[RMDB]
RNA sequence: GGGAACGACUCGAGUAGAGUCGAAAAGAUAUGGACCACCAGGGAGCUGGUGGUCGGAAACGACCAUGCAGCGAAGAACUGGAAUGGUCCUAAGUCAAACGACACUGUACUUCGGUACAGUGUCGAACUCAUUACCACUCUUCGGAGUGGUAAUGAGAAAAGAAACAACAACAACAAC
Reactivity to 2A3 in 0.01 (KOAc 150mM, MgCl2 10mM, bicine 150mM(pH8.5), 24C), signal-to-noise 3, nucleotides 027 to 126: g000a000u020a010u040g000g000a000c000c010a060c000c000a060g010g000g050a020g000c010u000g000g000u010g000g010u040c000g000g020a020a000a000c000g030a000c000c020a060u300g240c000a270g000c030g290a300a010g000a020a010c010u020g020g160a090a300u300g010g000u000c000c000u000a000a000g000u000c000a000a040a190c010g000a000c000a000c020u010g010u010a000c010u030u120c300g120g000u000a010c000a010g000u000g000u000c000g000a000a000
Reactivity to DMS in 0.01 (KOAc 150mM, MgCl2 10mM, bicine 150mM(pH8.5), 24C), signal-to-noise 2, nucleotides 027 to 126: g010a000u000a010u010g000g020a010c000c010a210c000c000a020g000g010g010a020g030c010u000g000g020u000g010g010u000c000g010g000a000a000a010c030g020a010c020c000a020u000g010c020a000g020c010g040a130a190g010a110a250c010u000g010g000a160a130u000g020g010u000c000c010u000a000a090g010u000c010a050a120a220c030g010a010c000a000c010u000g030u000a010c000u000u010c170g020g040u000a010c000a010g010u000g000u010c000g000a030a060
An RNA of 177 nucleotides, treated with 2A3 and DMS and read out base by base. For 2A3 the reverse transcriptase was SuperScript II with manganese. DMS adducts were read by reverse transcription with MarathonRT.